Structure probing data (DMS and 2A3) for a 177-nucleotide construct. DMS adducts were read by reverse transcription with MarathonRT. For 2A3 the reverse transcriptase was SuperScript II with manganese. The data come from the RNA Mapping Database (RMDB), library RFM100. Conditions: 150 mM KOAc, 10 mM MgCl2 and 150 mM bicine (pH 8.5), 24 C.

RNA sequence: GGGAACGACUCGAGUAGAGUCGAAAAACGUGGACGCUUGCCUCGAAGAUUAAGCCAUGCAAGUCUGUGAAUAUAUGAAACAGUGUACGGCUCAGUAUAACACCUAUAUCUACCCACUUUUUAAAUAAAAUCCCCAAGUUUUCGAACUUGGGGAUUUAAAAGAAACAACAACAACAAC
Reactivity to DMS in 0.01 (KOAc 150mM, MgCl2 10mM, bicine 150mM(pH8.5), 24C), signal-to-noise 2, nucleotides 027 to 126: a100c110g010u010g030g000a190c100g020c000u010u020g010c020c010u000c040g000a060a110g000a120u010u000a040a070g000c040c010a130u000g000c020a040a050g010u000c030u000g000u000g000a140a140u020a170u070a060u000g000a150a120a010c090a070g000u030g010u000a100c060g030g020c030u000c050a120g000u040a090u000a090a160c050a030c030c030u000a050u040a030u020c020u000a080c020c010c010a080c080u000u040u010u010u000a060a080a080u020a100
Reactivity to 2A3 in 0.01 (KOAc 150mM, MgCl2 10mM, bicine 150mM(pH8.5), 24C), signal-to-noise 1, nucleotides 027 to 126: a000c070g000u000g000g000a010c030g010c080u060u050g010c010c000u140c030g030a100a000g000a030u080u040a080a030g060c000c000a060u180g020c020a000a020g080u050c010u000g080u010g070a070a020u040a010u060a040u250g140a120a000a000c000a000g000u030g010u000a010c090g030g000c040u000c060a020g000u060a100u000a180a040c040a090c000c000u020a010u000a040u140c030u000a060c000c000c000a000c000u030u120u120u000u100a070a140a040u210a030